[RMDB]
This 177-nucleotide RNA was probed chemically with 2A3. 2A3 adducts were read by reverse transcription with SuperScript II with manganese. The 2A3 profile rests on 493 reads.

RNA sequence: GGGAACGACUCGAGUAGAGUCGAAAAUGGCUGGCAUGCAUUUCGGUGCUUGUGACUACGACAGACUUCCUAAUGAAGUCACCGUGGCCAAACCCAAUGUGCUGAUUGCUUUAAAAAUGGUGAAGCGGGCUCAAGGUACGUUCGCGUACCUUGAGCCAAAAGAAACAACAACAACAAC
Reactivity to 2A3 in 0.01 (KOAc 150mM, MgCl2 10mM, bicine 150mM(pH8.5), 24C), signal-to-noise 2, nucleotides 027 to 126: u080g000g000c000u000g030g080c020a050u120g120c000a000u000u050u230c250g100g000u120g030c040u020u030g060u170g060a020c030u060a000c120g000a010c020a230g000a000c000u000u000c000c040u260a300a140u300g000a000a000g000u000c000a000c140c010g000u000g000g000c000c010a000a000a180c010c000c000a020a030u050g070u000g070c060u000g070a130u140u140g000c000u000u000u000a040a230a070a000a030u130g040g070u190g100a020a030g060c000g070